[RMDB]
RNA sequence: GGGAACGACUCGAGUAGAGUCGAAAAGGAUGAAUUACUAUCCAAAUGGGGCGUUCGGCCAGGUGCACGAUUCAGAAGUUGAGGCCUACGAGGCUCGAUCUAACGAUACUGCAAAGCAAGUCCGCUACCGCGAGGUGAUCGAAUGAACCUAAAGCAGAUCUAAAGUUCAAUUCGUUGAACUUUAGAUAAAAGAAACAACAACAACAAC
Reactivity to 2A3 in 0.01 (KOAc 150mM, MgCl2 10mM, bicine 150mM(pH8.5), 24C), signal-to-noise 4, nucleotides 027 to 156: g050g010a060u060g050a100a140u200u090a140c070u080a040u040c020c000a020a040a070u100g010g000g000g020c020g020u050u030c020g040g010c010c020a050g050g040u050g000c020a010c060g030a040u060u060c020a030g040a120a010g070u050u050g030a030g040g060c010c000u050a090c180g080a130g020g000c010u020c020g030a040u010c040u050a060a020c030g000a010u030a100c020u020g000c010a000a000a080g010c010a080a060g050u030c030c030g020c050u100a140c020c020g000c030g030a030g000g030u070g020a060u070c040g030a020a050u070g020a040a050c010c000u040a070a050a020g060c060a030g020
Reactivity to DMS in 0.01 (KOAc 150mM, MgCl2 10mM, bicine 150mM(pH8.5), 24C), signal-to-noise 4, nucleotides 027 to 156: g010g010a080u000g020a180a120u000u010a110c070u000a090u000c030c020a060a070a110u000g010g000g040g020c050g040u000u000c050g030g000c030c030a090g010g030u000g010c040a090c040g010a110u000u020c060a110g020a090a120g020u000u010g020a140g030g020c010c010u000a090c120g010a130g040g020c040u000c010g010a050u000c030u010a130a110c070g010a120u000a050c060u010g000c080a060a070a120g030c030a050a120g010u000c040c010g000c050u000a050c020c010g000c080g010a110g030g030u000g000a050u000c020g010a080a080u010g010a060a060c010c010u010a050a080a110g010c070a100g010

Structure probing data (2A3 and DMS) for a 207-nucleotide construct. In probing experiments dimethyl sulfate is read out at A N1 and C N3, which are open when not base-paired. For DMS the reverse transcriptase was MarathonRT. The reactions ran in a buffer of 150 mM KOAc, 10 mM MgCl2 and 150 mM bicine (pH 8.5), at 24 C. For DMS, 11,167 sequencing reads were counted. For 2A3 the reverse transcriptase was SuperScript II with manganese.